[RMDB]
RNA sequence: GGGAACGACUCGAGUAGAGUCGAAAAGUCGUACUUAUGGUAAUGCGGAAACAUUUUACCCUAUGCCAUUCUUAUCACCACAAACAAUGUGGUACUACAAAUCAGCAUUCAAUACUGAUCAGAUGAAACUACUUGAUCUAUUCGUAGAUCAAGUAGUAAAAGAAACAACAACAACAAC
Reactivity to 2A3 in 0.01 (KOAc 150mM, MgCl2 10mM, bicine 150mM(pH8.5), 24C), signal-to-noise 9, nucleotides 027 to 126: g060u040c030g030u040a070c040u130u140a030u070g030g000u080a140a060u080g060c100g070g040a080a110a030c080a120u100u140u130u230a130c010c000c010u040a070u110g000c000c010a020u060u030c050u080u150a140u160c060a010c020c010a010c020a040a290a060c080a150a220u130g000u000g010g020u010a040c010u030a020c010a020a130a030u030c010a000g040c030a050u130u230c100a120a070u090a170c010u020g020a030u060c040a040g070a220u120g100a130a050
Reactivity to DMS in 0.01 (KOAc 150mM, MgCl2 10mM, bicine 150mM(pH8.5), 24C), signal-to-noise 8, nucleotides 027 to 126: g010u010c050g010u000a140c030u000u000a040u010g030g000u010a030a140u010g010c110g010g010a130a100a140c220a110u020u030u010u020a080c020c000c030u000a070u010g020c020c010a010u010u010c110u010u020a080u030c110a050c000c000a010c020a060a140a160c280a080a090u020g020u030g010g030u000a050c090u010a070c150a080a070a040u000c010a010g010c140a100u020u050c270a090a090u030a180c010u000g010a020u000c110a080g010a100u020g000a080a050
An RNA of 177 nucleotides, treated with 2A3 and DMS and read out base by base. For DMS, 19,686 sequencing reads were counted. The 2A3 profile rests on 52,238 reads. It was measured as part of the RMDB library OK1LIB. The RNA was probed in 150 mM KOAc, 10 mM MgCl2 and 150 mM bicine (pH 8.5) at 24 C.